Overview
The record gives the reactivity of an RNA of 207 nucleotides to 2A3. The reactions ran in a buffer of 150 mM KOAc, 10 mM MgCl2 and 150 mM bicine (pH 8.5), at 24 C.

[RMDB]
RNA sequence: GGGAACGACUCGAGUAGAGUCGAAAACUAACCACAUACAUAGAGUGGAAGAGAGGUGUUCUUCCCAAGACCAUUCUAGAGACUCUUACUUGAAGAGGGGAGAAUGGAUAUUUCCCUUUCUCCUUAUUCUAGAGUAUUUGUGGCACUCUUAUUUAACACGAUUGAGUUCAUUCGUGAACUCAAUCGUAAAAGAAACAACAACAACAAC
Reactivity to 2A3 in 0.01 (KOAc 150mM, MgCl2 10mM, bicine 150mM(pH8.5), 24C), signal-to-noise 2, nucleotides 027 to 156: c040u050a050a060c010c010a020c020a040u300a070c030a010u200a060g070a010g010u060g050g040a100a060g050a000g010a040g040g080u090g050u020u130c010u100u060c010c020c010a000a060g000a020c030c040a070u050u000c010u010a020g000a050g030a260c000u000c000u010u070a140c030u160u190g070a030a050g030a050g080g010g010g000a010g030a000a000u030g000g050a050u100a130u130u190u160c000c000c020u020u000u000c020u020c000c000u020u080a110u090u030c000u020a010g000a000g030u020a040u020u080u080g030u050g030g020c020a030c010u050c030u000u180a240u150u190u130a130a030c040